[RMDB]
Chemical mapping of a 177-nucleotide RNA with DMS and 2A3.
The RNA was probed in 150 mM KOAc, 10 mM MgCl2 and 150 mM bicine (pH 8.5) at 24 C.
It was measured as part of the RMDB library OK2TRN.
For DMS, 2,572 sequencing reads were counted.
For DMS the reverse transcriptase was MarathonRT.

RNA sequence: GGGAACGACUCGAGUAGAGUCGAAAAAGUCUGCUAAAAUCAAAAGUGGGAGGGUUCAGUAAGGUGAAUAACAGAAGCAGAGUUUUCGGGGUAUCUGUUACUCCUCAUUCGGCUUUUCUGCUCUCUGUCACUAUGUCCUUUUCGAAGGACAUAGUGAAAAAGAAACAACAACAACAAC
Reactivity to DMS in 0.01 (KOAc 150mM, MgCl2 10mM, bicine 150mM(pH8.5), 24C), signal-to-noise 3, nucleotides 027 to 126: a080g010u000c060u000g000c050u020a050a110a100a110u010c090a070a080a100a100g020u000g010g000g000a130g010g000g010u000u000c110a070g010u030a070a080g000g010u000g000a080a040u010a090a110c060a010g000a040a060g010c010a020g000a040g000u000u000u000u010c160g010g010g000g000u000a030u000c290u010g010u000u000a020c020u000c020c000u010c180a110u000u000c100g040g000c040u010u000u010u010c010u000g000c030u000c120u010c030u000g010
Reactivity to 2A3 in 0.01 (KOAc 150mM, MgCl2 10mM, bicine 150mM(pH8.5), 24C), signal-to-noise 2, nucleotides 027 to 126: a000g050u050c030u030g030c010u050a070a150a060a190u150c060a170a160a080a020g060u110g000g060g030a140g070g000g000u100u120c030a010g030u140a140a010g080g000u070g080a140a050u110a140a000c000a000g000a030a000g010c010a000g010a040g030u050u000u110u180c060g000g070g000g000u050a040u040c070u100g170u160u010a020c000u000c000c040u030c030a040u100u080c040g180g020c010u200u050u080u020c010u000g000c010u000c010u000c000u030g050